[RMDB]
RNA sequence: GGGAACGACUCGAGUAGAGUCGAAAAGAUAUGGAACGUCUGUAAACCUGAACUACCAUCGGGACAGGAAUCGGAAACGAUUCCUGUUCUCUAGCGUGUGGCAGGGAAGAAGGACGUUCCUAAGUCAGAGACAAUGAUAGUUCGCUAUCAUUGUCUCAAAAGAAACAACAACAACAAC
Reactivity to DMS in 0.01 (KOAc 150mM, MgCl2 10mM, bicine 150mM(pH8.5), 24C), signal-to-noise 4, nucleotides 027 to 126: g010a050u030a300u000g010g010a000a020c020g040u010c010u000g020u000a020a160a300c010c000u000g000a060a130c080u000a120c060c000a260u030c300g000g000g000a000c010a020g000g000a000a010u000c020g000g010a060a060a240c010g000a020u000u000c000c000u000g010u000u000c000u000c050u010a130g000c300g040u000g000u010g000g000c000a010g000g000g030a040a090g070a210a300g000g000a010c020g010u010u000c000c010u000a010a070g010u000c050a160
Reactivity to 2A3 in 0.01 (KOAc 150mM, MgCl2 10mM, bicine 150mM(pH8.5), 24C), signal-to-noise 2, nucleotides 027 to 126: g050a020u120a060u140g010g000a000a000c010g000u000c080u140g010u030a010a020a020c000c000u050g090a250a170c040u040a020c120c000a150u190c130g030g000g010a000c020a000g030g000a000a020u000c020g000g030a140a060a040c000g000a010u000u000c010c020u010g000u040u000c000u010c000u000a050g040c070g040u180g020u030g300g300c010a020g030g020g000a070a190g000a000a000g000g000a000c000g010u000u010c000c000u010a010a000g000u020c050a010
Structure probing data (DMS and 2A3) for a 177-nucleotide construct. It was measured as part of the RMDB library TTRINS. The reactions ran in a buffer of 150 mM KOAc, 10 mM MgCl2 and 150 mM bicine (pH 8.5), at 24 C. The DMS profile rests on 1,876 reads. Reactivities are given for positions 27 through 126. 2A3 is a SHAPE reagent: it acylates the 2'-hydroxyl of flexible nucleotides of all four kinds.